[RMDB]
RNA sequence: GGGAACGACUCGAGUAGAGUCGAAAACGGCGGCAGAGGCGGCUGCGGAGGCAGCUGCGCUGGCAGCUUCCUUGGCCGUAGAGGAAGCUGAGGUGAAGCCGGAGCCAAAAAUUGAGCCCACUUCGCGAUAUAUAGGUGAAUUCGUUCACCUAUAUAUAAAAGAAACAACAACAACAAC
Reactivity to DMS in 0.01 (KOAc 150mM, MgCl2 10mM, bicine 150mM(pH8.5), 24C), signal-to-noise 9, nucleotides 027 to 126: c070g010g010c050g010g020c030a050g010a110g010g030c020g010g010c010u000g000c010g010g040a160g010g010c010a020g010c010u000g010c020g010c020u000g010g010c010a010g000c010u000u000c000c000u000u000g010g020c050c100g000u010a150g010a030g000g000a030a020g010c010u000g000a170g010g020u010g010a100a180g000c030c030g010g010a170g010c040c040a030a070a060a100a140u010u010g000a130g000c010c010c020a120c130u000u000c050g010c110g000
Reactivity to 2A3 in 0.01 (KOAc 150mM, MgCl2 10mM, bicine 150mM(pH8.5), 24C), signal-to-noise 4, nucleotides 027 to 126: c010g020g010c020g030g000c040a010g010a050g180g060c020g020g000c000u020g000c040g050g170a140g250g000c010a000g020c020u030g000c030g010c010u020g070g010c010a000g010c000u010u010c010c000u020u020g100g030c150c040g030u050a060g000a010g010g010a000a010g000c010u010g010a020g000g080u110g070a050a000g020c030c040g010g010a020g050c010c020a030a130a010a050a090u110u130g030a030g020c000c040c010a040c050u110u080c050g030c040g030
An RNA of 177 nucleotides, treated with DMS and 2A3 and read out base by base. Conditions: 150 mM KOAc, 10 mM MgCl2 and 150 mM bicine (pH 8.5), 24 C. High 2A3 reactivity points to a flexible backbone, as in loops and unpaired stretches. Source: RMDB library OK2TRN, as collected in RNAgym. The DMS profile rests on 22,724 reads.